[RMDB]
Structure probing data (2A3 and DMS) for a 177-nucleotide construct. Reactivities are given for positions 27 through 126. The reactions ran in a buffer of 150 mM KOAc, 10 mM MgCl2 and 150 mM bicine (pH 8.5), at 24 C. It was measured as part of the RMDB library OK1LIB. 2A3 adducts were read by reverse transcription with SuperScript II with manganese. For DMS the reverse transcriptase was MarathonRT.
RNA sequence: GGGAACGACUCGAGUAGAGUCGAAAAAGCAGCAAAGGAUAUUCCGAUCCUGUUUUGCGGGUUGAUUGCAUAAAUUUAUAUAGCGAUAUAUAAAGUGAGACAGAUGAUUAUCCUUGACAGAAUCCGGAUUAUUAUAGGGUUUCGACCCUAUAAUAAUAAAAGAAACAACAACAACAAC
Reactivity to 2A3 in 0.01 (KOAc 150mM, MgCl2 10mM, bicine 150mM(pH8.5), 24C), signal-to-noise 8, nucleotides 027 to 126: a000g090c100a010g030c080a060a020a050g010g000a000u010a010u050u040c040c030g040a030u050c020c020u000g010u010u010u010u020g020c020g010g060g010u090u170g080a100u070u080g000c010a020u090a120a210a140u140u230u030a120u010a010u030a050g010c000g000a000u000a000u000a000u030a070a090a020g010u020g010a010g010a010c010a010g020a040u050g000a000u040u010a000u010c010c000u020u030g030a050c020a070g120a060a040u030c010c010g040g040
Reactivity to DMS in 0.01 (KOAc 150mM, MgCl2 10mM, bicine 150mM(pH8.5), 24C), signal-to-noise 9, nucleotides 027 to 126: a100g010c130a070g010c180a070a020a020g000g000a010u000a020u000u000c060c250g010a090u020c090c010u000g000u000u000u000u010g020c020g010g010g010u020u020g010a090u010u020g000c070a080u020a060a080a130u010u010u010a020u000a020u000a040g000c100g000a160u000a010u010a020u000a020a030a080g010u010g010a050g010a040c020a020g000a100u020g000a040u000u000a010u000c000c000u000u000g000a110c150a110g000a100a100u020c020c020g010g010